[RMDB]
RNA sequence: GGGAACGACUCGAGUAGAGUCGAAAAGUCAGCUCUAACAUUUGCCAGUCAUCUAUGUUCCAACCAACAAAUAACCUGCCUUGCACACUUCAAACGGAGAAUGGAAAGUUAGAAUUCUCAAUAUGCAUAAUUACUGAAAAUUCGUUUUCAGUAAUUAAAAAGAAACAACAACAACAAC
Reactivity to 2A3 in 0.01 (KOAc 150mM, MgCl2 10mM, bicine 150mM(pH8.5), 24C), signal-to-noise 4, nucleotides 027 to 126: g040u020c020a020g000c020u020c020u060a090a030c030a100u050u040u110g040c030c010a020g050u060c020a030u010c060u090a060u110g060u020u030c010c010a050a050c040c000a010a060c040a040a160a030u120a050a020c000c000u020g010c010c030u030u040g000c040a040c000a010c030u040u130c060a040a080a040c070g050g000a030g040a060a020u040g010g050a130a070a020g010u060u040a070g020a140a090u060u000c010u000c010a030a070u220a130u190g000c010a020
Reactivity to DMS in 0.01 (KOAc 150mM, MgCl2 10mM, bicine 150mM(pH8.5), 24C), signal-to-noise 7, nucleotides 027 to 126: g010u000c080a100g010c070u000c050u000a060a080c050a090u000u010u000g010c020c020a050g020u000c070a050u000c050u000a070u010g010u010u000c020c030a100a120c070c060a070a090c100a050a080a080u000a070a100c070c030u000g000c050c030u000u000g020c040a060c090a060c060u000u000c070a040a080a090c180g000g000a050g000a030a030u000g000g000a070a050a100g010u000u000a070g000a100a100u000u000c000u000c020a070a080u010a080u000g010c130a150